The record gives the reactivity of an RNA of 177 nucleotides to DMS and 2A3. The RNA was probed in 150 mM KOAc, 10 mM MgCl2 and 150 mM bicine (pH 8.5) at 24 C. The 2A3 profile rests on 2,522 reads. Values are in units of 0.01, from 0 to 300, in steps of 10. High DMS reactivity at an A or C suggests that its Watson-Crick edge is free.
[RMDB]
RNA sequence: GGGAACGACUCGAGUAGAGUCGAAAACGGCCGCUAUGCAGUGAUCGGUACUAGCGCGGUACGGCGCGAGUACGAUCCUAUCAGUACUGGAUCACAGCUGGCGCGCGCUAGUACGUGACUGCGCGCGGAUGGGUUCCUCUUUCGAGAGGAACCCAUCAAAAGAAACAACAACAACAAC
Reactivity to DMS in 0.01 (KOAc 150mM, MgCl2 10mM, bicine 150mM(pH8.5), 24C), signal-to-noise 3, nucleotides 027 to 126: c080g010g020c030c020g010c010u000a090u010g000c020a010g020u010g000a060u010c110g000g020u010a000c010u000a040g010c010g020c040g010g000u010a120c240g020g000c010g010c050g000a030g010u000a090c260g000a010u000c030c030u000a300u010c110a100g000u000a130c260u010g010g010a040u000c010a130c180a140g010c010u000g000g000c040g010c000g000c000g000c010u000a000g000u020a020c020g010u000g010a080c020u000g000c000g040c300g000c010g000
Reactivity to 2A3 in 0.01 (KOAc 150mM, MgCl2 10mM, bicine 150mM(pH8.5), 24C), signal-to-noise 3, nucleotides 027 to 126: c030g100g010c090c010g000c010u050a110u300g000c010a010g000u010g140a150u180c110g180g040u010a010c010u010a000g010c030g030c030g070g070u170a210c040g090g000c030g010c040g080a040g020u070a070c120g000a020u030c000c010u070a110u130c080a080g170u180a100c140u070g020g010a010u020c010a060c020a070g010c010u050g080g000c060g000c010g000c000g010c070u000a010g000u000a010c040g020u020g060a000c010u010g000c000g040c010g030c020g000